Chemical mapping of a 177-nucleotide RNA with DMS and 2A3. The reactions ran in a buffer of 150 mM KOAc, 10 mM MgCl2 and 150 mM bicine (pH 8.5), at 24 C. 2A3 adducts were read by reverse transcription with SuperScript II with manganese. Values cover nucleotides 27 to 126. The data come from the RNA Mapping Database (RMDB), library OK2TST. For 2A3, 1,065 sequencing reads were counted.
RNA sequence: GGGAACGACUCGAGUAGAGUCGAAAAACGGUAGGUCUCCGCCUUCUCCUUCUUGCCGAGGUGAUCCAUGAGGUCGGCGAGAUCACGAGCCGCCUUGCUGAACUGGUGGGCGAUGAAGAAGGACUCCUCCGAUAAUGCACUUCGGUGCAUUAUCGGAAAAAGAAACAACAACAACAAC
Reactivity to DMS in 0.01 (KOAc 150mM, MgCl2 10mM, bicine 150mM(pH8.5), 24C), signal-to-noise 1, nucleotides 027 to 126: a160c070g030g020u000a070g010g010u000c020u000c010c000g070c020c010u000u000c090u000c030c050u000u000c050u000u000g000c010c020g010a100g040g000u000g000a080u000c030c040a080u000g050a070g010g010u000c000g010g010c000g020a080g000a090u000c090a110c130g010a100g010c030c000g000c080c000u000u000g040c050u000g000a060a090c070u010g030g030u000g000g020g030c060g020a050u000g000a050a030g030a050a030g000g000a140c140u000c040c030
Reactivity to 2A3 in 0.01 (KOAc 150mM, MgCl2 10mM, bicine 150mM(pH8.5), 24C), signal-to-noise 1, nucleotides 027 to 126: a000c040g030g000u050a030g060g020u000c000u070c070c000g000c000c000u100u040c000u060c000c020u050u000c000u050u070g000c010c030g090a100g090g080u120g020a040u030c010c010a100u130g110a030g030g070u130c050g000g030c010g000a020g020a050u150c070a030c150g010a000g060c000c000g080c040c030u100u080g020c030u050g010a100a060c020u120g010g010u040g100g030g010c000g070a080u130g020a000a050g000a000a000g000g000a010c000u020c020c000